[RMDB]
RNA sequence: GGGAACGACUCGAGUAGAGUCGAAAAGGAUGUGAGGGCGAUCUGGCUGCGACAUCUGUCACCCCAUUGAUCGCCAGGGUUGAUUCGGCUGAUCUGGCUGGCUAGGCGGGUGUCCCCUUCCUCCCUCAAUCGUAUCAUAGUUCGCUAUGAUACGAUUAAAAGAAACAACAACAACAAC
Reactivity to 2A3 in 0.01 (KOAc 150mM, MgCl2 10mM, bicine 150mM(pH8.5), 24C), signal-to-noise 9, nucleotides 027 to 126: g040g010a030u060g030u050g060a060g000g020g010c050g040a070u020c040u060g050g000c050u050g030c050g020a000c000a020u020c030u030g020u010c040a260c000c010c000c010a040u050u210g010a020u020c010g000c000c020a030g100g030g020u240u180g100a170u170u140c050g020g000c060u140g010a040u020c010u020g050g000c070u060g030g000c070u090a080g030g000c010g010g000g000u010g010u010c010c000c000c000u010u020c000c010u010c010c000c000u000c020
Reactivity to DMS in 0.01 (KOAc 150mM, MgCl2 10mM, bicine 150mM(pH8.5), 24C), signal-to-noise 9, nucleotides 027 to 126: g000g000a040u010g010u010g010a060g010g000g000c240g010a050u010c060u000g000g010c210u010g010c300g010a020c010a040u000c030u000g010u000c020a150c050c140c000c010a080u010u020g010a020u000c030g000c000c010a070g010g000g020u010u020g000a190u020u020c110g010g010c030u030g020a030u000c020u000g000g000c090u020g000g000c130u020a100g010g010c030g000g010g010u000g000u000c010c010c010c050u000u000c020c010u000c000c000c010u000c040

Conditions: 150 mM KOAc, 10 mM MgCl2 and 150 mM bicine (pH 8.5), 24 C. Chemical mapping of a 177-nucleotide RNA with 2A3 and DMS.